[RMDB]
RNA sequence: GGGAACGACUCGAGUAGAGUCGAAAACGUCCUAGUUUCGACUAGGACGAAAUAAAAUCAGCGGUAAAUAAUCGAGGCGUAUUUCCGCUGAACGCCUCGAUAAAAUGCGAUGAUUCGUCAUCGCAAAGUACCUUAUAGUCUUCGGACUAUAAGGUACAAAAGAAACAACAACAACAAC
Reactivity to DMS in 0.01 (KOAc 150mM, MgCl2 10mM, bicine 150mM(pH8.5), 24C), signal-to-noise 5, nucleotides 027 to 126: c020g000u000c000c000u000a000g010u000u000u010c180g010a040c010u000a000g010g000a000c000g000a010a050a070u000a080a050a070a110u000c030a030g030c020g000g010u010a050a080a070u010a070a040u010c040g010a020g010g000c000g000u010a100u000u000u010c020c000g020c040u000g020a030a020c010g000c000c000u000c000g000a050u010a020a060a080a130u000g010c000g010a010u000g000a020u000u010c170g020u010c000a000u000c010g020c000a010a010a070
Reactivity to 2A3 in 0.01 (KOAc 150mM, MgCl2 10mM, bicine 150mM(pH8.5), 24C), signal-to-noise 6, nucleotides 027 to 126: c010g000u000c000c000u000a000g010u010u060u070c230g080a020c000u000a000g000g020a000c000g000a000a010a000u100a000a050a000a060u060c020a010g020c020g110g160u130a090a110a070u140a100a070u140c020g000a010g010g000c000g010u020a110u030u100u030c010c010g010c030u010g000a010a000c000g000c000c000u000c000g000a000u060a020a090a010a020u070g000c010g000a000u000g000a010u030u050c150g040u010c060a000u000c000g000c000a000a000a010